RNA sequence: GGGAACGACUCGAGUAGAGUCGAAAAGAGAUGUAGUUCGCUACAUCUCAAACAUAAACAUGAGAAAAUGCAACCGAGGCACCGAAGCCAUAAAAGUAAAAAAAAGUACGUUGUUCGCAACGUACAACGUAUUAGGCCAGUUCGCUGGCCUAAUACGAAAAGAAACAACAACAACAAC
Reactivity to 2A3 in 0.01 (KOAc 150mM, MgCl2 10mM, bicine 150mM(pH8.5), 24C), signal-to-noise 2, nucleotides 027 to 126: g010a000g000a000u000g000u000a020g000u000u060c200g000c050u030a000c000a020u000c000u000c000a020a020a000c020a010u230a040a160a030c020a020u160g070a050g030a130a120a070a020u090g010c030a040a010c070c000g070a070g000g030c030a000c000c070g100a040a000g030c020c010a000u080a030a140a000a010g070u130a000a040a110a080a020a000a040a000g000u000a000c000g000u010u010g020u030u080c190g020c080a000a000c000g000u000a000c000a000a010
Reactivity to DMS in 0.01 (KOAc 150mM, MgCl2 10mM, bicine 150mM(pH8.5), 24C), signal-to-noise 1, nucleotides 027 to 126: g000a000g000a030u000g000u000a040g000u010u030c300g020c020u000a010c020a000u000c000u010c000a030a160a060c030a040u010a110a080a130c090a090u010g040a100g000a100a030a030a110u000g000c090a030a100c070c020g000a080g000g030c030a000c080c100g000a060a070g030c060c020a080u000a060a090a060a150g010u030a030a000a000a100a020a000a080a060g000u010a000c020g000u000u010g020u000u000c110g000c070a030a020c030g000u020a000c030a030a040
Source: RMDB library M2PK50, as collected in RNAgym. This 177-nucleotide RNA was probed chemically with 2A3 and DMS. The 2A3 profile rests on 1,509 reads. The RNA was probed in 150 mM KOAc, 10 mM MgCl2 and 150 mM bicine (pH 8.5) at 24 C.